An RNA of 177 nucleotides, treated with 2A3 and DMS and read out base by base. For 2A3, 527 sequencing reads were counted. DMS adducts were read by reverse transcription with MarathonRT. The reactions ran in a buffer of 150 mM KOAc, 10 mM MgCl2 and 150 mM bicine (pH 8.5), at 24 C.
[RMDB]
RNA sequence: GGGAACGACUCGAGUAGAGUCGAAAAAUGACGAUAGUAAGUCAGCAGGUGGAAACACUUUGUGCGUGGGUUAGGUAGCCUCAUAUACAUGAACGACUGAUGUAGAGUUCGGUUGGGGAGAUAAGUAGUUACACGCCAAGUUCGCUUGGCGUGUAACAAAAGAAACAACAACAACAAC
Reactivity to 2A3 in 0.01 (KOAc 150mM, MgCl2 10mM, bicine 150mM(pH8.5), 24C), signal-to-noise 1, nucleotides 027 to 126: a030u000g000a010c020g000a000u050a020g250u180a090a100g000u020c020a020g170c050a000g060g000u000g000g000a020a080a000c050a000c000u140u260u120g000u000g040c100g000u020g020g010g000u000u000a000g010g010u000a040g030c010c020u000c040a100u100a040u090a060c070a100u110g040a010a030c020g000a030c100u130g010a060u020g050u010a020g060a030g130u010u020c010g000g000u030u000g020g070g020g000a030g000a000u190a160a000g100u030a060
Reactivity to DMS in 0.01 (KOAc 150mM, MgCl2 10mM, bicine 150mM(pH8.5), 24C), signal-to-noise 2, nucleotides 027 to 126: a080u010g000a030c070g020a140u020a070g000u000a100a180g000u000c010a100g050c120a060g020g100u010g010g000a090a110a130c090a040c010u000u030u000g000u000g010c070g070u000g000g000g000u050u010a070g010g020u020a080g000c030c040u010c060a020u000a080u020a060c100a080u010g000a050a070c090g020a120c050u000g020a090u010g010u000a080g000a100g010u020u000c030g040g010u000u000g020g020g010g000a110g020a120u090a040a100g000u000a110